[RMDB]
RNA sequence: GGGAACGACUCGAGUAGAGUCGAAAACAAGGAAUGCGUCGACAAUAACAGUAAAUAUCGGCCAAUUGGUAUCGGUAUUCAAGGUCUCGCAGAUUUAUUCUGUAUCAUGCGUAUACCUUAUUUAAGUGAUCUUGCUAGUGAAAUAGAUGUCAACAUCCCCGAACGAACAGUUCGCUGUUCGUUCGGGAAAAGAAACAACAACAACAAC
Reactivity to 2A3 in 0.01 (KOAc 150mM, MgCl2 10mM, bicine 150mM(pH8.5), 24C), signal-to-noise 2, nucleotides 027 to 156: c010a000a000g100g000a040a010u010g000c000g000u030c050g090a040c040a040a150u190a200a080c010a100g140u190a080a010a000u040a020u030c000g000g000c040c060a190a300u200u300g010g010u070a120u250c000g000g000u000a010u000u060c070a030a030g010g040u000c000u000c050g010c020a000g000a000u010u140u220a070u160u000c060u010g100u050a030u040c090a180u070g040c030g000u010a000u060a140c000c000u060u090a130u110u060u070a100a090g010u010g140a060u040c010u040u030g060c000u000a070g040u020g100a060a030a040u030a040g040a030u070g050u050c040a040a060c000a130u090c000